About this RNA:
Chemical mapping of a 207-nucleotide RNA with DMS and 2A3. Reactivities are given for positions 27 through 156. For 2A3, 2,382 sequencing reads were counted. Conditions: 150 mM KOAc, 10 mM MgCl2 and 150 mM bicine (pH 8.5), 24 C. For DMS, 7,136 sequencing reads were counted. For DMS the reverse transcriptase was MarathonRT.
[RMDB]
RNA sequence: GGGAACGACUCGAGUAGAGUCGAAAACUUCGCUGUUGGCGUCGUACUCGCGGCCGUCGCGGUCGAGCAGGGUCUGGUUGGUGCCCGAGAACGAGCGGGCCUCGUCGCCGAUGUUCUUGACGGUGAGCGUGACGACGAUGAACUCACCUUGCGCCUCAUUUUACACCGAAUUCGUUCGGUGUAAAAUAAAAGAAACAACAACAACAAC
Reactivity to DMS in 0.01 (KOAc 150mM, MgCl2 10mM, bicine 150mM(pH8.5), 24C), signal-to-noise 2, nucleotides 027 to 156: c040u000u000c090g050c010u000g010u010u000g020g020c030g040u000c040g030u000a130c030u000c000g020c010g020g040c010c030g040u000c060g030c110g020g030u000c030g010a130g020c020a120g010g010g000u010c030u020g020g030u000u000g030g020u000g000c020c030c100g010a100g000a120a130c070g000a100g020c000g020g030g010c050c000u000c060g000u000c010g010c020c000g000a060u000g020u000u000c090u010u000g020a080c030g010g000u010g000a090g040c010g040u000g000a100c010g000a040c030g000a130u000g000a070a090c000u000c050a040c030c040u000u000g010c030g020c110c010u030c030
Reactivity to 2A3 in 0.01 (KOAc 150mM, MgCl2 10mM, bicine 150mM(pH8.5), 24C), signal-to-noise 3, nucleotides 027 to 156: c030u100u090c030g000c080u050g030u120u100g010g020c010g010u010c000g000u060a300c000u010c040g020c000g040g000c030c000g020u040c040g010c050g080g130u130c070g000a050g050c050a050g060g000g000u080c080u170g130g030u100u110g060g050u140g010c000c010c010g030a030g010a090a070c130g020a050g070c010g020g050g000c000c020u020c040g020u030c030g020c000c010g080a110u030g070u100u080c050u070u140g020a020c020g030g020u080g050a050g030c010g010u010g000a000c010g000a010c010g000a010u060g020a010a020c020u040c050a100c030c020u030u070g020c030g010c010c010u100c020